The record gives the reactivity of an RNA of 177 nucleotides to 2A3 and DMS.
The DMS profile rests on 6,979 reads.
The reactions ran in a buffer of 150 mM KOAc, 10 mM MgCl2 and 150 mM bicine (pH 8.5), at 24 C.
For 2A3, 4,321 sequencing reads were counted.
For DMS the reverse transcriptase was MarathonRT.
RNA sequence: GGGAACGACUCGAGUAGAGUCGAAAAUUAGCAUGACGUCUUCGCACUGAGCUUUGCUGUCGAACCGUCUGCUGGUAUGAUCCGGCAUCUGGACACAGCCAUCGCCAGUACAAAGGAAAGCAGUGGCUCCAAAGUCUAGUUUCGACUAGACUUUGGAAAAAGAAACAACAACAACAAC
Reactivity to 2A3 in 0.01 (KOAc 150mM, MgCl2 10mM, bicine 150mM(pH8.5), 24C), signal-to-noise 3, nucleotides 027 to 126: u050u020a030g040c040a040u170g030a020c030g040u030c070u040u020c020g000c040a040c050u070g070a020g070c000u150u120u150g020c030u050g040u100c050g020a080a060c000c000g000u020c010u030g000c000u020g000g010u220a220u250g090a110u060c020c000g020g020c030a050u010c040u080g010g020a020c020a000c030a090g010c030c010a040u020c020g020c000c010a020g010u040a040c050a070a080a000g080g020a110a040a000g000c040a010g050u020g070g020c030
Reactivity to DMS in 0.01 (KOAc 150mM, MgCl2 10mM, bicine 150mM(pH8.5), 24C), signal-to-noise 6, nucleotides 027 to 126: u010u010a050g020c010a050u010g020a090c060g000u000c070u000u000c060g020c140a030c050u000g000a130g020c070u010u000u000g020c060u010g010u000c040g000a050a070c180c020g010u000c080u000g010c000u000g010g020u000a090u000g000a140u010c020c010g020g020c040a060u010c040u000g010g020a110c080a060c080a040g000c050c040a020u000c060g020c020c010a020g000u010a070c150a040a070a110g010g000a060a050a080g010c140a090g020u000g020g010c050
The data come from the RNA Mapping Database (RMDB), library OK2TRN. 2A3 adducts were read by reverse transcription with SuperScript II with manganese.